[RMDB]
This 207-nucleotide RNA was probed chemically with DMS and 2A3. The RNA was probed in 150 mM KOAc, 10 mM MgCl2 and 150 mM bicine (pH 8.5) at 24 C. The 2A3 profile rests on 474 reads. The DMS profile rests on 3,063 reads. It was measured as part of the RMDB library OK3TST.
RNA sequence: GGGAACGACUCGAGUAGAGUCGAAAACUAAUCUUGUUACUCCUGGUAAAUACUUGUUUAAGGGUUAUCAUGCUGAUAUAAUACUUCUUCCUGGUUGGGCUAUUGAUUUUUCUUUUUCUAGAUUGGGUAACAUUUUAGGUAUUAGAAAACGUGAGACCCUAUGUGGAAGAUUCGUCUUCCACAUAGGAAAAGAAACAACAACAACAAC
Reactivity to DMS in 0.01 (KOAc 150mM, MgCl2 10mM, bicine 150mM(pH8.5), 24C), signal-to-noise 1, nucleotides 027 to 156: c000u000a080a050u000c020u010u000g030u000u000a100c010u000c010c010u000g000g000u000a060a070a060u000a080c060u000u000g020u020u010u000a060a100g010g020g030u000u000a080u000c030a070u000g030c030u000g020a110u010a090u000a060a080u000a070c040u000u010c080u000u000c000c020u000g000g020u000u000g020g030g090c070u000a100u000u020g010a090u000u010u000u000u000c010u000u000u010u000u000c010u020a070g010a110u000u000g010g010g030u000a060a110c030a040u000u000u010u000a050g010g010u000a070u000u000a080g010a090a070a040a060c060g030u000g010a120g010a120c200
Reactivity to 2A3 in 0.01 (KOAc 150mM, MgCl2 10mM, bicine 150mM(pH8.5), 24C), signal-to-noise 1, nucleotides 027 to 156: c010u030a020a020u090c000u050u110g060u050u050a160c020u020c010c000u010g100g010u050a030a120a060u060a050c040u060u130g080u180u110u120a110a060g000g010g010u010u050a080u060c060a000u040g060c010u020g070a060u020a020u030a240a050u050a080c020u050u070c020u040u000c010c010u020g000g090u040u040g030g020g050c030u100a030u110u040g020a080u090u090u010u060u010c010u000u090u050u010u020c000u030a060g000a100u080u140g000g000g000u010a060a040c020a010u010u080u040u030a010g010g020u040a070u010u000a070g170a050a070a060a010c010g030u030g030a030g050a010c010